[RMDB]
RNA sequence: GGGAACGACUCGAGUAGAGUCGAAAAAAGUUGGUGUGAAGGUUGGGUCUUGCGCAAUGGGAACCUUGUGAACCAUGUCAGGUCCGGAAGGAAGCAGCAUUAAGCAGUGUUCUCAUGUGCCGCGAGUCGCCUGGCCCGAGCUAACUAUCAGGGUAACCCAUUGAAUACCCUUCGGGGUAUUCAAUGGAAAAGAAACAACAACAACAAC
Reactivity to 2A3 in 0.01 (KOAc 150mM, MgCl2 10mM, bicine 150mM(pH8.5), 24C), signal-to-noise 2, nucleotides 027 to 156: a010a000g080u080u010g000g020u110g030u070g090a080a060g010g000u000u010g010g000g000u040c000u000u000g000c010g010c000a000a000u000g000g010g000a000a000c010c030u050u060g010u030g020a040a060c140c030a040u010g030u020c000a010g000g030u000c000c020g050g050a180a050g030g000a010a000g000c000a000g000c000a000u000u010a020a020g010c000a000g010u000g010u140u010c000u020c000a020u220g080u080g190c050c040g000c010g000a000g020u060c110g010c010c000u010g010g000c010c000c000g000a010g000c000u000a000a000c010u010a050u200c110a060g130g030g040u090a030a060c000
Reactivity to DMS in 0.01 (KOAc 150mM, MgCl2 10mM, bicine 150mM(pH8.5), 24C), signal-to-noise 1, nucleotides 027 to 156: a070a070g010u000u000g010g010u010g040u000g010a080a040g010g010u030u000g010g010g010u010c000u000u000g080c020g040c010a050a020u000g010g000g020a030a040c010c020u060u070g010u000g000a090a190c190c230a090u000g000u010c060a300g010g000u000c010c020g030g020a160a130g050g000a070a230g010c000a290g010c020a060u000u000a150a300g010c000a040g000u000g020u000u000c000u000c000a030u000g000u010g050c100c000g040c020g010a080g030u020c190g040c050c010u040g020g000c030c010c010g010a300g000c030u000a030a020c010u000a060u000c070a050g000g000g050u010a040a100c210
Chemical mapping of a 207-nucleotide RNA with 2A3 and DMS. Conditions: 150 mM KOAc, 10 mM MgCl2 and 150 mM bicine (pH 8.5), 24 C. For 2A3, 1,700 sequencing reads were counted. The data come from the RNA Mapping Database (RMDB), library ARCHII.